[RMDB]
RNA sequence: GGGAACGACUCGAGUAGAGUCGAAAAGAUAUGGACCAGGAUAUGUUCAUCGAUCAUCGGUCGGAAACGACCGAUGGGAGAACCUAUCUGGUCCUAAGUCAAACGCCCAUCCUUCGGGAUGGGCGAAGUUAUUUUUAUUGUUCGCAAUAAAAAUAACAAAAGAAACAACAACAACAAC
Reactivity to DMS in 0.01 (KOAc 150mM, MgCl2 10mM, bicine 150mM(pH8.5), 24C), signal-to-noise 2, nucleotides 027 to 126: g000a030u000a270u000g000g000a030c000c010a020g020g000a080u000a040u000g000u000u000c020a300u000c220g020a100u010c000a020u000c000g030g020u010c000g000g000a070a080a100c000g000a010c000c000g000a000u000g000g010g010a060g010a000a000c010c190u020a100u000c000u000g010g020u000c010c020u000a000a100g000u000c010a100a200a300c040g010c020c000c010a010u000c000c000u000u020c270g040g000g010a020u000g000g000g000c000g000a010a030
Reactivity to 2A3 in 0.01 (KOAc 150mM, MgCl2 10mM, bicine 150mM(pH8.5), 24C), signal-to-noise 1, nucleotides 027 to 126: g010a000u010a010u040g000g000a020c020c020a000g100g090a080u140a030u300g010u000u030c100a300u300c110g030a020u030c000a000u000c000g010g010u010c000g000g000a040a040a020c000g020a000c000c030g000a000u000g000g000g000a030g000a020a010c030c020u180a210u270c000u000g000g000u020c000c000u000a010a010g000u000c030a140a060a100c040g010c050c000c000a000u010c010c000u070u150c300g250g000g010a000u000g030g030g040c010g000a000a000
This 177-nucleotide RNA was probed chemically with DMS and 2A3. Conditions: 150 mM KOAc, 10 mM MgCl2 and 150 mM bicine (pH 8.5), 24 C. For 2A3 the reverse transcriptase was SuperScript II with manganese. Source: RMDB library TTRDES, as collected in RNAgym.